[RMDB]
RNA sequence: GGGAACGACUCGAGUAGAGUCGAAAAGAUAUGGACGAAGCAAGUCGCAAUGUGAGCUUUGAUCGAUAAAUCUCGGAAACGAGAUUUAUCGGGAGCUCAUGACGAUGAUGACCUUCGUCCUAAGUCAUCAACACCAGUAGUUCGCUACUGGUGUUGAAAAAGAAACAACAACAACAAC
Reactivity to DMS in 0.01 (KOAc 150mM, MgCl2 10mM, bicine 150mM(pH8.5), 24C), signal-to-noise 2, nucleotides 027 to 126: g020a070u020a300u000g020g040a030c000g010a020a000g000c040a090a300g020u000c000g010c090a090a210u030g000u000g000a010g010c000u000u000u020g010a110u000c000g000a040u000a000a030a030u000c000u000c000g000g000a170a050a220c000g020a020g000a000u000u000u000a000u000c000g010g010g000a000g010c010u000c010a000u000g020a110c300g020a100u000g020a040u000g000a300c300c000u010u010c010g010u000c000c000u000a000a050g000u010c070a100
Reactivity to 2A3 in 0.01 (KOAc 150mM, MgCl2 10mM, bicine 150mM(pH8.5), 24C), signal-to-noise 1, nucleotides 027 to 126: g050a010u050a030u150g000g000a000c000g010a000a000g040c100a160a110g020u000c000g040c150a180a200u300g000u000g010a000g010c020u170u270u180g180a190u300c000g010a010u000a000a000a000u050c010u010c010g000g030a070a060a090c000g000a010g000a000u020u000u000a010u000c000g000g050g010a000g000c000u000c000a000u030g080a080c030g160a220u260g050a180u140g050a010c030c000u000u000c000g000u000c000c000u000a010a000g010u030c000a080
Structure probing data (DMS and 2A3) for a 177-nucleotide construct. The reactions ran in a buffer of 150 mM KOAc, 10 mM MgCl2 and 150 mM bicine (pH 8.5), at 24 C. For 2A3, 1,972 sequencing reads were counted. The data come from the RNA Mapping Database (RMDB), library TTRINS. The DMS profile rests on 1,204 reads.